[RMDB]
This 177-nucleotide RNA was probed chemically with 2A3 and DMS. For 2A3 the reverse transcriptase was SuperScript II with manganese. 2A3 is a SHAPE reagent: it acylates the 2'-hydroxyl of flexible nucleotides of all four kinds. The DMS profile rests on 797 reads. The RNA was probed in 150 mM KOAc, 10 mM MgCl2 and 150 mM bicine (pH 8.5) at 24 C. It was measured as part of the RMDB library OK2TST.

RNA sequence: GGGAACGACUCGAGUAGAGUCGAAAACGAACGUUUCAUUCGGAACGUUCCUGGACGCGAUCUGUGCCUUGAUGGGGAUCGAGCGCGGUUCUGAUCUGUCAACCUUCGGCUAUGGAGUUCAAGUCACGACCAUGUCACCCUUCGGGGUGACAUGGUCAAAAGAAACAACAACAACAAC
Reactivity to 2A3 in 0.01 (KOAc 150mM, MgCl2 10mM, bicine 150mM(pH8.5), 24C), signal-to-noise 1, nucleotides 027 to 126: c050g000a000a010c000g010u000u040u000c190a300u240u300c190g060g000a000a000c000g010u000u000c000c000u070g060g040a050c020g030c060g070a020u000c030u060g110u040g090c000c030u060u170g050a100u220g040g000g000g030a010u050c000g020a030g050c050g000c020g020g000u010u090c040u040g030a100u050c020u040g090u050c030a070a020c000c000u000u050c020g020g000c030u080a070u150g040g030a040g030u110u110c000a020a020g040u000c010a000c110
Reactivity to DMS in 0.01 (KOAc 150mM, MgCl2 10mM, bicine 150mM(pH8.5), 24C), signal-to-noise 1, nucleotides 027 to 126: c190g010a050a030c000g020u000u010u000c000a190u000u020c260g020g000a020a050c000g000u000u000c000c090u020g000g040a210c100g010c100g020a040u000c000u020g010u000g010c040c000u010u000g000a070u000g000g030g000g040a080u020c220g000a020g050c060g050c030g040g080u000u000c030u020g010a070u010c010u000g010u040c080a110a140c080c050u000u000c030g000g000c040u010a170u020g010g000a110g000u020u000c140a040a130g000u030c170a070c080